[RMDB]
RNA sequence: GGGAACGACUCGAGUAGAGUCGAAAAGCGGCAUUGGUGAUCGCCUCUAGACCUAAGGCCCAGGAAAACAAAGUGGUCUUCAACCAAACCCACGGUAGAGGUUCACCUCCAGCGCCAAGAGGUCAAAAUCGUCAGUAGGAUUCGUCCUACUGACGAUAAAAGAAACAACAACAACAAC
Reactivity to DMS in 0.01 (KOAc 150mM, MgCl2 10mM, bicine 150mM(pH8.5), 24C), signal-to-noise 3, nucleotides 027 to 126: g020c220g000g040c110a080u010u010g020g020u000g020a080u000c170g000c010c040u000c060u000a130g000a040c040c020u010a050a210g040g000c020c010c030a090g010g000a110a040a100a170c220a100a090a130g000u010g000g000u000c030u000u000c090a070a040c000c010a160a080a120c060c030c050a050c130g020g010u010a040g010a020g000g000u000u000c040a050c030c010u000c030c050a020g040c260g000c000c020a070a080g010a090g000g000u000c090a060a060a100
Reactivity to 2A3 in 0.01 (KOAc 150mM, MgCl2 10mM, bicine 150mM(pH8.5), 24C), signal-to-noise 2, nucleotides 027 to 126: g070c060g050g020c060a090u070u130g090g030u080g040a070u080c070g040c010c000u020c030u030a090g040a030c000c010u010a090a060g010g000c020c020c030a040g090g050a060a190a020a090c140a050a130a030g050u060g000g000u000c000u030u030c050a040a050c030c000a030a060a130c050c010c000a020c060g010g000u030a000g000a000g000g000u060u050c010a000c000c010u020c000c010a050g010c010g030c020c020a070a040g100a060g060g000u030c050a070a030a060